The data come from the RNA Mapping Database (RMDB), library OK3TST.
This 207-nucleotide RNA was probed chemically with DMS and 2A3.
Values are in units of 0.01, from 0 to 300, in steps of 10.
The DMS profile rests on 1,436 reads.
DMS adducts were read by reverse transcription with MarathonRT.
RNA sequence: GGGAACGACUCGAGUAGAGUCGAAAAGAUGUCAUGUGUCCAGGGGGCAGAAAAUCCCUCCCUCUACAGGAAGACGAGGAUGAGGAUGACAUGCCAGACCCCUCCUCUUUCCAUGAUCUCUUUCACAAUGACAUUGUGGUGGAGGGCACUCUGUUUGGCGAUUAGUAGAUUUCGAUCUACUAAUCGCAAAAGAAACAACAACAACAAC
Reactivity to DMS in 0.01 (KOAc 150mM, MgCl2 10mM, bicine 150mM(pH8.5), 24C), signal-to-noise 1, nucleotides 027 to 156: g000a080u030g040u000c000a080u000g030u010g000u010c040c000a090g080g000g000g080g080c120a110g000a010a110a080a090u010c020c010c000u000c010c010c010u000c040u010a220c140a160g010g010a120a140g010a060c150g020a090g060g020a090u000g030a130g040g040a120u010g040a090c010a120u000g030c040c090a040g010a090c000c000c000c020u010c000c010u020c040u000u000u000c020c000a050u000g050a080u000c080u000c040u000u010u010c180a110c200a050a090u000g020a040c000a300u010u000g000u000g030g000u000g010g020a040g010g010g000c010a040c070u000c030u040g030u010u000u000g090
Reactivity to 2A3 in 0.01 (KOAc 150mM, MgCl2 10mM, bicine 150mM(pH8.5), 24C), signal-to-noise 3, nucleotides 027 to 156: g060a020u080g030u040c010a000u040g020u010g010u020c030c010a060g050g010g000g000g020c070a080g230a120a150a000a040u030c000c000c010u020c000c000c000u030c030u060a070c070a070g110g090a070a040g070a040c090g000a010g040g010a050u110g030a080g040g020a010u030g100a030c020a020u030g050c010c000a090g040a190c050c030c000c000u000c000c010u030c000u070u180u040c010c020a060u040g070a120u050c020u010c010u100u200u100c070a080c040a100a130u110g020a020c030a040u010u050g020u000g010g030u040g000g010a020g000g010g010c010a020c030u120c030u030g110u150u140u110g090